[RMDB]
RNA sequence: GGGAACGACUCGAGUAGAGUCGAAAAAUACAUUCCUGUGCCGGCAAUACAGUGUGUAUGGAGGUCUCAAUGGCUCGGAAGUGCCAGCAAACCGGCGUAGCUAUUAGCAGACGUAUGGGCGUAAGACAAAAGAGAAUGAUGUUCGCAUCAUUCUCAAGCACUCAAUUAUCUUCGGAUAAUUGAGUGCAAAAGAAACAACAACAACAAC
Reactivity to 2A3 in 0.01 (KOAc 150mM, MgCl2 10mM, bicine 150mM(pH8.5), 24C), signal-to-noise 3, nucleotides 027 to 156: a000u100a040c030a030u020u070c010c000u050g040u050g020c010c020g050g010c100a060a050u070a060c030a090g030u050g040u010g010u120a050u070g050g060a060g010g110u020c050u060c040a060a160u080g000g010c030u060c130g060g040a090a040g040u040g030c020c020a010g040c080a060a020a040c000c020g020g000c020g030u030a020g020c010u070a050u160u080a120g000c040a020g020a060c030g060u060a040u110g080g010g000c010g070u030a080a010g080a060c050a080a100a020a020g010a000g000a000a000u010g010a000u000g030u060u060c210g000c080a000u040c000a000u000u000c000u000c010a000a080
Reactivity to DMS in 0.01 (KOAc 150mM, MgCl2 10mM, bicine 150mM(pH8.5), 24C), signal-to-noise 1, nucleotides 027 to 156: a070u000a030c010a050u000u020c300c010u000g050u010g000c070c000g050g010c020a070a120u000a090c030a070g000u010g020u010g030u000a050u010g010g000a030g000g010u000c040u000c020a100a130u010g060g000c020u000c060g020g010a140a130g030u000g020c020c010a070g000c060a070a140a130c050c020g000g030c000g020u000a070g110c010u010a080u010u010a170g000c010a070g000a100c040g020u010a060u000g010g010g010c040g010u000a060a080g000a080c050a030a060a130a160g000a010g000a040a020u010g000a040u000g010u000u000c300g010c010a030u000c010a040u000u000c010u000c010a020a000